[RMDB]
RNA sequence: GGGAACGACUCGAGUAGAGUCGAAAAGAAAAGAUACAGGCAAGUAGACCGCCUGAAUCGUAGGCAAAAUGACUAAAAGGAUCAGGUUAGCAACAAUGAGUCCUUAAAAUCGACUAAAAUAAAAAAAGUACAUGACUUGAUUCGUCAAGUCAUGUACAAAAGAAACAACAACAACAAC
Reactivity to DMS in 0.01 (KOAc 150mM, MgCl2 10mM, bicine 150mM(pH8.5), 24C), signal-to-noise 1, nucleotides 027 to 126: g000a160a070a120a140g000a020u010a070c020a000g000g000c000a040a140g000u000a040g020a150c240c180g000c000c000u000g000a070a000u000c000g000u000a060g020g070c160a050a050a070a130u000g000a000c020u000a060a010a100a010g020g000a170u000c020a070g070g010u000u000a160g020c050a060a020c020a070a110u000g000a070g000u000c000c000u000u000a030a180a170a040u000c110g000a060c070u000a010a050a080a000u010a010a100a150a030a020a010a060
Reactivity to 2A3 in 0.01 (KOAc 150mM, MgCl2 10mM, bicine 150mM(pH8.5), 24C), signal-to-noise 1, nucleotides 027 to 126: g000a000a160a010a000g000a000u050a030c010a000g000g020c000a040a040g090u060a060g210a070c000c030g020c000c000u000g010a000a020u000c020g000u050a000g080g000c040a030a000a070a170u100g000a020c050u160a000a180a010a000g000g000a020u020c000a000g010g090u010u130a040g130c040a040a070c010a040a060u100g020a070g140u060c000c000u020u050a070a140a040a040u060c040g020a040c040u080a140a160a140a070u170a100a160a040a040a000a000a000